[RMDB]
RNA sequence: GGGAACGACUCGAGUAGAGUCGAAAAUGGCUAAUUCAAGGAAUUAGCGUGCCUUCAUGCUAAGGGUUUGAUAUCUGCUAAAACCCGGUGCAUUCAUCAAUGCAGGUUAAGCCAAAGGGAUGUCCCGAAAAGAACGCAAGGUUCGCCUUGCGUUCAACUGUAGAAUAGCCUUCGGGCUAUUCUACAGAAAAGAAACAACAACAACAAC
Reactivity to DMS in 0.01 (KOAc 150mM, MgCl2 10mM, bicine 150mM(pH8.5), 24C), signal-to-noise 2, nucleotides 027 to 156: u000g040g010c020u000a010a020u000u000c040a170a150g020g010a080a090u010u000a020g000c050g050u000g020c060c040u000u000c040a130u010g030c010u000a270a190g000g020g020u010u000u000g000a230u000a060u000c040u000g000c060u000a110a090a040a040c000c000c010g030g060u000g000c000a040u000u000c090a100u010c120a100a200u000g000c000a020g000g010u010u000a090a140g000c010c030a040a040a130g010g020g000a110u000g000u000c020c010c010g020a050a090a090a200g020a010a010c000g000c000a010a010g000g030u000u000c300g010c020c000u000u000g000c000g030u000u000c000a020a070
Reactivity to 2A3 in 0.01 (KOAc 150mM, MgCl2 10mM, bicine 150mM(pH8.5), 24C), signal-to-noise 2, nucleotides 027 to 156: u150g080g000c000u020a010a020u030u020c120a240a140g140g050a060a020u020u000a010g000c010g000u020g040c000c000u110u150c060a070u120g000c010u020a030a060g010g010g010u030u010u020g040a040u040a060u100c030u060g000c030u050a000a020a030a020c010c020c010g020g000u020g020c010a050u050u160c010a050u090c020a070a130u100g010c000a010g090g010u070u100a070a010g040c040c040a080a080a040g090g010g000a120u110g100u170c000c000c010g020a050a090a010a030g000a010a000c000g000c000a000a000g020g010u010u060c130g070c040c000u000u000g010c000g010u000u000c000a000a000